[RMDB]
RNA sequence: GGGAACGACUCGAGUAGAGUCGAAAAUCCCCUUAUGUCCAGCCCCUCCCCGGUCCGAGAGAAGGGGGACUCCGGGACUCCUUGCAUGUUGGGGACGAAGCCGCCCCCGGGCGCUCCCCUCGAUCCAAUAGUAGGCUCUUCGGAGCCUACAAAAGAAACAACAACAACAAC
Reactivity to 2A3 in 0.01 (KOAc 150mM, MgCl2 10mM, bicine 150mM(pH8.5), 24C), signal-to-noise 2, nucleotides 027 to 129: u010c030c000c000c000u060u090a090u180g020u020c000c000a020g000c000c000c030c100u040c000c000c000c130g050g000u050c000c000g020a040g000a000g000a070a040g000g000g000g000g040a010c000u000c030c010g000g000g110a020c040u220c060c000u070u070g070c050a100u190g120u160u100g070g010g000g000a010c010g100a040a000g020c010c000g120c000c000c000c000c000g040g000g000c060g090c030u030c000c000c020c030u020c140g080a060u010c020c000a030a000u080a070
Reactivity to DMS in 0.01 (KOAc 150mM, MgCl2 10mM, bicine 150mM(pH8.5), 24C), signal-to-noise 4, nucleotides 027 to 129: u010c000c000c000c000u020u050a090u020g060u040c060c030a120g000c130c030c030c000u010c000c050c000c050g020g060u010c080c000g060a100g000a040g010a110a090g000g040g000g000g000a090c040u000c120c030g130g040g000a150c070u030c060c070u010u000g020c090a130u030g000u030u020g000g000g050g010a120c110g030a070a210g020c050c090g000c170c020c000c000c050g040g000g010c000g130c000u030c020c000c000c030u030c060g020a110u040c130c010a090a200u050a040

Structure probing data (2A3 and DMS) for a 170-nucleotide construct. It was measured as part of the RMDB library 15KLIB. The RNA was probed in 150 mM KOAc, 10 mM MgCl2 and 150 mM bicine (pH 8.5) at 24 C. The DMS profile rests on 5,708 reads.